Chemical mapping of a 177-nucleotide RNA with 2A3 and DMS. For 2A3 the reverse transcriptase was SuperScript II with manganese. The RNA was probed in 150 mM KOAc, 10 mM MgCl2 and 150 mM bicine (pH 8.5) at 24 C. For DMS, 2,833 sequencing reads were counted. Reactivities are given for positions 27 through 126. It was measured as part of the RMDB library 15KREP. DMS adducts were read by reverse transcription with MarathonRT. For 2A3, 1,520 sequencing reads were counted.

RNA sequence: GGGAACGACUCGAGUAGAGUCGAAAAAGCGUUCCCUCUCGAUGAAGCAGAAGAUGUUACUGAAUCUGUGCAAGAAGAAGCACAACCAGUAGAAGUACCUGUUGAAGAUAUUGCGCAGGUUGUCAUAGACUCUUUUAAGGUUCGCCUUAAAAGAGUCAAAAGAAACAACAACAACAAC
Reactivity to 2A3 in 0.01 (KOAc 150mM, MgCl2 10mM, bicine 150mM(pH8.5), 24C), signal-to-noise 2, nucleotides 027 to 126: a000g090c020g000u010u000c010c020c000u000c000u000c000g100a110u090g160a140a040g000c040a020g010a080a000g050a090u100g030u090u030a050c010u050g050a030a040u040c040u040g000u010g010c030a030a020g120a070a010g070a070a010g080c040a000c000a080a010c030c000a010g000u030a010g030a140a010g060u000a040c000c000u000g010u030u040g020a010a010g040a090u080a050u030u100g010c040g020c000a010g000g010u030u070g040u040c000a010u040a080
Reactivity to DMS in 0.01 (KOAc 150mM, MgCl2 10mM, bicine 150mM(pH8.5), 24C), signal-to-noise 3, nucleotides 027 to 126: a060g030c080g000u000u000c010c000c000u000c050u000c050g030a110u010g020a130a170g010c030a040g000a090a050g000a160u000g010u000u000a090c110u010g010a080a070u010c070u000g000u000g010c010a060a070g010a130a110g010a130a110g020c070a070c030a030a040c090c010a040g030u000a040g010a150a060g010u010a040c040c000u000g000u020u000g010a100a070g000a080u000a070u010u000g010c050g040c020a040g000g000u000u000g000u000c080a110u010a190